[RMDB]
RNA sequence: GGGAACGACUCGAGUAGAGUCGAAAAGCAGGGAGGGCUGCGGUCAUGGGGCCAGUGCAGCCUGCAGAUCAGGCCCUGCAUUGGGCGGUGGCUGUCUCUGGAACCCUCUGUUGCAUCUCACUUUGGCCCCGAGGCUAAUAUUCGUAUUAGCCUCGGGAAAAGAAACAACAACAACAAC
Reactivity to 2A3 in 0.01 (KOAc 150mM, MgCl2 10mM, bicine 150mM(pH8.5), 24C), signal-to-noise 6, nucleotides 027 to 126: g010c000a010g000g020g040a020g000g020g000c030u040g000c040g010g030u040c020a030u060g060g010g130g260c000c000a020g030u010g000c000a040g300c020c000u010g000c030a040g020a130u220c030a010g060g000c020c050c020u000g000c010a020u020u050g030g040g030c080g060g010u030g010g000c010u010g080u110c030u040c070u200g120g060a130a130c010c040c000u010c010u030g200u130u040g010c010a050u000c000u020c010a060c020u090u040u080g080g010c010
Reactivity to DMS in 0.01 (KOAc 150mM, MgCl2 10mM, bicine 150mM(pH8.5), 24C), signal-to-noise 2, nucleotides 027 to 126: g000c040a090g000g040g050a030g010g000g000c030u030g040c010g020g050u010c010a020u070g010g000g010g010c000c000a040g010u000g000c010a020g000c020c000u000g000c150a050g000a130u050c110a090g050g000c020c100c060u010g000c100a060u050u030g010g010g000c010g040g050u010g000g000c010u000g000u070c070u000c080u030g010g000a100a100c060c000c010u010c040u000g000u020u060g000c030a040u000c000u000c020a140c080u040u040u010g000g000c140

An RNA of 177 nucleotides, treated with 2A3 and DMS and read out base by base.
It was measured as part of the RMDB library OK1LIB.
The DMS profile rests on 3,307 reads.
DMS adducts were read by reverse transcription with MarathonRT.